[RMDB]
RNA sequence: GGGAACGACUCGAGUAGAGUCGAAAAGCGUACUACAUUUGCCAUCAGCUUGGAUUUACAAGUCUCUAGCGUGAUCCGUCCCAAAUAGGACGGAUUCGGGCUUGUUGUCAGCUGAUGCAAAUGUAUCGCAAAAGUGACCCGGUUCGCCGGGUCACAACGCGAUCUCUUAGUUCGCUAAGAGAUCGCGAAAAGAAACAACAACAACAAC
Reactivity to 2A3 in 0.01 (KOAc 150mM, MgCl2 10mM, bicine 150mM(pH8.5), 24C), signal-to-noise 1, nucleotides 027 to 156: g010c010g010u120a270c040u000a000c030a000u000u000u000g070c110c000a010u000c030a010g010c000u120u090g140g020a050u300u270u170a090c030a010a010g000u010c030u030c030u230a250g130c120g270u220g050a000u000c000c000g000u050c010c030c000a270a300a050u180a070g000g000a000c030g000g010a000u000u060c000g000g000g000c000u010u000g010u000u000g000u000c000a000g000c000u000g000a000u000g010c000a000a000a000u000g000u000a000u160c010g020c010a000a030a080a080g000u010g000a000c000c030c000g000g040u090u030c180g020c040c000g000g020g000u000c000a000c000a000a030